RNA sequence: GGGAACGACUCGAGUAGAGUCGAAAAGGUGGCUCGUUGUGUCGGCACUUCUCUCGGGAGAACGAGUCACCGAUUUAGCAUGUUCGUCCUACGUUGUCGGUGGGCUUCCUGUAGGACGUUCAUGCGAGGGAAGGAGUUCCUUCGGGAAUUCCUUCCCAAAAGAAACAACAACAACAAC
Reactivity to 2A3 in 0.01 (KOAc 150mM, MgCl2 10mM, bicine 150mM(pH8.5), 24C), signal-to-noise 9, nucleotides 027 to 126: g000g000u000g000g000c000u000c020g010u010u020g150u070g240u110c020g040g080c080a070c190u300u110c070u030c030u070c050g020g000g010a090g040a020a000c000g000a000g000u000c000a000c000c000g000a000u000u000u070a010g000c000a000u000g010u000u000c000g000u000c000c000u000a000c010g010u010u030g040u030c080g050g260u300g220g050g000c020u030u020c020c120u100g000u000a000g000g000a000c000g000u000u000c000a000u000g000c000g000a090
Reactivity to DMS in 0.01 (KOAc 150mM, MgCl2 10mM, bicine 150mM(pH8.5), 24C), signal-to-noise 4, nucleotides 027 to 126: g000g030u000g010g000c000u000c000g030u000u000g000u010g000u000c010g020g010c190a110c110u010u020c080u010c070u000c030g010g000g000a030g000a010a010c000g000a010g000u000c000a010c000c000g010a010u020u020u020a120g000c000a000u000g000u000u000c010g000u000c000c000u000a010c020g010u000u000g000u000c030g010g040u040g000g000g010c030u010u010c010c120u040g050u010a000g000g000a000c010g020u000u010c010a000u000g000c010g000a110
Notes
Source: RMDB library OK1LIB, as collected in RNAgym. This 177-nucleotide RNA was probed chemically with 2A3 and DMS. 2A3 adducts were read by reverse transcription with SuperScript II with manganese. The reactions ran in a buffer of 150 mM KOAc, 10 mM MgCl2 and 150 mM bicine (pH 8.5), at 24 C. The 2A3 profile rests on 48,840 reads. For DMS, 26,103 sequencing reads were counted.